[RMDB]
RNA sequence: GGGAACGACUCGAGUAGAGUCGAAAAGUAUUUCUUUCCAUGGUGCUAUUACUUUUUCAAGGUCAACUUCAGGCAAAUUCAUUCGCUUAGUCAUGAAUUCGGGCUUAUUUGAACGGUUGAAUGGUAACUCUAUGGGAGAGUUCGCUCUCCCAUAGAGAAAAGAAACAACAACAACAAC
Reactivity to 2A3 in 0.01 (KOAc 150mM, MgCl2 10mM, bicine 150mM(pH8.5), 24C), signal-to-noise 2, nucleotides 027 to 126: g040u030a130u090u100u040c020u030u060u000c050c040a080u070g090g070u090g040c050u070a040u180u060a140c010u000u180u000u000u110c040a100a030g000g020u030c010a020a020c030u080u060c040a020g010g000c010a010a060a130u070u040c020a000u060u050c040g030c180u070u130a020g020u100c030a030u060g030a040a030u080u060c090g040g060g000c020u060u060a080u060u140u060g020a030a000c030g100g060u030u100g010a030a020u070g000g010u030a080a050
Reactivity to DMS in 0.01 (KOAc 150mM, MgCl2 10mM, bicine 150mM(pH8.5), 24C), signal-to-noise 2, nucleotides 027 to 126: g010u010a080u010u020u000c070u000u000u010c040c040a060u010g000g040u000g010c100u000a080u000u000a050c040u000u000u020u010u000c060a080a080g000g000u000c030a030a040c150u010u000c120a030g000g000c040a110a040a030u000u000c020a020u000u000c100g040c070u000u000a130g010u010c060a050u000g000a030a050u010u000c130g020g010g000c020u000u010a100u000u010u010g000a040a030c120g000g020u000u000g010a020a050u010g010g020u000a060a100
The record gives the reactivity of an RNA of 177 nucleotides to 2A3 and DMS. Reactivities are rounded to 0.1 and cut off at 0 and 3. For DMS, 2,385 sequencing reads were counted. The reactions ran in a buffer of 150 mM KOAc, 10 mM MgCl2 and 150 mM bicine (pH 8.5), at 24 C. DMS adducts were read by reverse transcription with MarathonRT. For 2A3 the reverse transcriptase was SuperScript II with manganese.